[RMDB]
RNA sequence: GGGAACGACUCGAGUAGAGUCGAAAACGCUGGAGCUUGGCGGCAAAUCGCCCAAUAUCGUCUUCGCCGAUAGCGAUCUGGAAAAGGCAAUUUCCCGCAGCCUCGCCCAUUGCUUUGAGAAUACCGAGCGGUAAUUACCAUUCGUGGUAAUUACCGCAAAAGAAACAACAACAACAAC
Reactivity to DMS in 0.01 (KOAc 150mM, MgCl2 10mM, bicine 150mM(pH8.5), 24C), signal-to-noise 1, nucleotides 027 to 126: c030g070c040u010g020g010a060g000c020u010u010g000g020c000g020g030c060a070a050a090u000c080g030c010c230c100a050a150u010a080u000c000g010u010c030u000u000c140g020c070c070g030a050u000a080g000c040g030a010u000c090u020g000g000a040a060a110a070g010g010c100a110a080u000u000u000c090c040c100g030c120a110g000c000c020u020c130g000c090c040c040a060u020u010g000c030u020u000u000g000a110g000a110a120u010a080c080c040g030a110
Reactivity to 2A3 in 0.01 (KOAc 150mM, MgCl2 10mM, bicine 150mM(pH8.5), 24C), signal-to-noise 1, nucleotides 027 to 126: c070g020c020u020g030g030a000g050c000u000u020g020g040c010g010g050c000a000a040a080u030c050g010c030c010c040a070a040u090a020u100c030g060u010c060u070u030c070g060c110c020g080a060u060a020g030c020g000a020u000c030u180g030g020a030a060a040a040g020g000c010a020a000u000u040u010c000c000c020g050c000a010g010c050c030u010c030g080c000c000c000a050u010u120g040c000u140u080u110g110a040g000a140a040u110a110c080c050g020a030